[RMDB]
RNA sequence: GGGAACGACUCGAGUAGAGUCGAAAAGUAUGCAGGUUUGACACACGUGUGCAUUCUGAGUUCAAUUUGCCAGGUUGUGAUGGCGGUAGUUUGUAUGUUAACAAGCACGCUUUUCAUACACCAGCAUUAGCGAUGCGGUUCGCCGCAUCGAAAAGAAACAACAACAACAAC
Reactivity to 2A3 in 0.01 (KOAc 150mM, MgCl2 10mM, bicine 150mM(pH8.5), 24C), signal-to-noise 8, nucleotides 027 to 129: g060u070a070u110g030c030a010g030g060u030u070u120g120a050c020a010c010a020c070g060u090g010u020g120c010a000u020u020c020u020g140a080g050u050u130c050a060a110u000u030u110g010c010c010a050g000g000u000u000g010u020g010a020u020g000g000c030g050g030u080a130g010u020u010u020g070u030a160u140g250u090u180a120a020c010a010a000g000c000a000c020g000c000u160u140u080u040c000a000u010a000c040a010c040c000a000g000c010a000u020u030a050g030
Reactivity to DMS in 0.01 (KOAc 150mM, MgCl2 10mM, bicine 150mM(pH8.5), 24C), signal-to-noise 7, nucleotides 027 to 129: g000u030a030u040g040c050a100g000g000u010u010u010g000a200c060a130c120a110c090g030u080g030u030g040c030a000u000u000c020u050g020a190g020u000u000c050a110a060u000u000u000g030c020c090a110g000g000u000u000g000u050g020a000u000g010g060c040g000g060u000a110g000u010u000u020g020u020a120u070g040u030u030a160a030c000a030a020g040c000a100c040g000c000u010u030u020u020c000a000u020a040c100a010c080c000a180g000c040a050u020u050a100g030